RNA sequence: GGGAACGACUCGAGUAGAGUCGAAAAAAUGUGAAGCAAAUGAUGAUAAACUGGAUCUGACUGACUGUGCUGAGUCUGUUCAAUCCAACCCUGAGCUUCAUGUUAAAGACACGAGUUCGCUCGUGUCCGCCUACUAAUCGUUCGCGAUUAGUAGGCGAAAAGAAACAACAACAACAAC
Reactivity to DMS in 0.01 (KOAc 150mM, MgCl2 10mM, bicine 150mM(pH8.5), 24C), signal-to-noise 2, nucleotides 027 to 126: a050a000u010g030u000g010a010a000g000c000a040a180a120u010g000a130u010g020a160u030a050a090a210c200u000g000g000a020u010c160u010g030a030c020u000g000a030c010u000g030u000g040c220u000g000a020g010u010c000u000g000u000u000c010a050a020u000c000c010a000a100c060c030c010u000g000a300g010c000u000u000c000a030u000g030u000u000a040a050a100g000a000c010a000c020g000a030g020u000u000c230g060c000u000c000g030u000g000u000c000
Reactivity to 2A3 in 0.01 (KOAc 150mM, MgCl2 10mM, bicine 150mM(pH8.5), 24C), signal-to-noise 2, nucleotides 027 to 126: a000a000u040g000u000g010a000a010g020c020a050a090a170u110g050a040u050g040a070u220a170a150a020c070u040g000g000a030u030c070u080g000a010c000u000g020a000c010u030g040u160g210c150u220g040a010g000u000c000u000g050u130u020c010a000a000u000c000c000a000a090c000c000c030u000g020a020g000c000u030u000c000a000u000g000u010u090a130a260a020g000a000c010a000c010g000a010g010u080u100c140g100c060u010c000g000u010g000u000c000